RNA sequence: GGGAACGACUCGAGUAGAGUCGAAAACCGGGCCAAGUGUCGGCAGCCACCAAGGGUGAGGGCGUCCAGGAGCUCCGAGACUCCCGCUGCUUCCCAGGUCUGACCUGCGGCCACGGCGCCCCCCCACCUAACUGAAACAGUUCGCUGUUUCAGUUAGAAAAGAAACAACAACAACAAC
Reactivity to DMS in 0.01 (KOAc 150mM, MgCl2 10mM, bicine 150mM(pH8.5), 24C), signal-to-noise 5, nucleotides 027 to 126: c020c000g010g000g020c030c010a130a270g020u000g010u010c050g010g030c190a070g000c060c070a070c080c070a110a170g010g000g000u010g000a040g000g000g020c020g000u010c130c120a170g010g000a130g000c080u000c100c120g000a170g010a130c020u000c010c020c020g010c060u010g010c040u000u000c010c020c020a130g000g000u000c050u010g010a050c060c000u000g000c200g010g000c030c030a040c060g010g000c040g010c020c000c000c000c000c000c020a070c230
Reactivity to 2A3 in 0.01 (KOAc 150mM, MgCl2 10mM, bicine 150mM(pH8.5), 24C), signal-to-noise 4, nucleotides 027 to 126: c010c000g000g040g000c040c030a150a090g090u090g050u190c030g060g030c030a020g080c040c040a060c030c040a210a300g010g000g050u200g060a060g000g020g030c010g050u120c110c030a030g060g000a040g030c030u090c160c150g140a120g080a270c020u000c010c010c010g030c020u090g110c000u050u050c000c010c010a020g030g000u020c080u030g120a230c010c010u030g020c030g010g020c010c010a030c020g010g000c020g080c000c000c000c020c010c000c000a020c000
An RNA of 177 nucleotides, treated with DMS and 2A3 and read out base by base. 2A3 adducts were read by reverse transcription with SuperScript II with manganese.